Background
Chemical mapping of a 177-nucleotide RNA with DMS and 2A3. 2A3 adducts were read by reverse transcription with SuperScript II with manganese. The reactions ran in a buffer of 150 mM KOAc, 10 mM MgCl2 and 150 mM bicine (pH 8.5), at 24 C.
[RMDB]
RNA sequence: GGGAACGACUCGAGUAGAGUCGAAAAGAAAAGUAGUCUAGUGGGUGGCUACGAACCACGAAAAGCUCGUUAGGCCAUACGAGCGAAGGCCGAAAAGCAUAUUAGAGUAUGUGCGACUCGAAAGAAAGGGAUAGAUAUACUUCGGUAUAUCUAUCCCAAAAGAAACAACAACAACAAC
Reactivity to DMS in 0.01 (KOAc 150mM, MgCl2 10mM, bicine 150mM(pH8.5), 24C), signal-to-noise 4, nucleotides 027 to 126: g010a060a080a100a120g000u020a030g000u000c000u010a120g040u020g010g000g010u030g010g010c040u010a050c100g020a110a130c070c020a110c070g020a060a090a160a190g010c000u000c010g000u010u010a060g010g040c050c040a110u030a070c050g000a040g000c050g020a110a100g000g000c020c020g010a090a110a050a140g000c020a040u030a040u000u020a060g010a130g010u000a040u020g000u010g000c020g010a080c040u000c010g020a050a100a130g010a030a110a170
Reactivity to 2A3 in 0.01 (KOAc 150mM, MgCl2 10mM, bicine 150mM(pH8.5), 24C), signal-to-noise 5, nucleotides 027 to 126: g070a000a070a000a010g040u090a010g010u030c040u070a050g030u060g040g090g020u060g020g000c020u030a010c040g020a030a040c010c020a020c080g050a080a030a020a050g010c000u000c010g090u140u040a080g090g000c020c030a050u060a150c010g000a000g000c000g020a040a020g060g000c010c000g030a040a060a010a000g010c010a000u010a030u060u120a090g040a020g080u070a040u130g050u050g020c020g010a040c020u010c020g010a050a060a050g070a040a050a030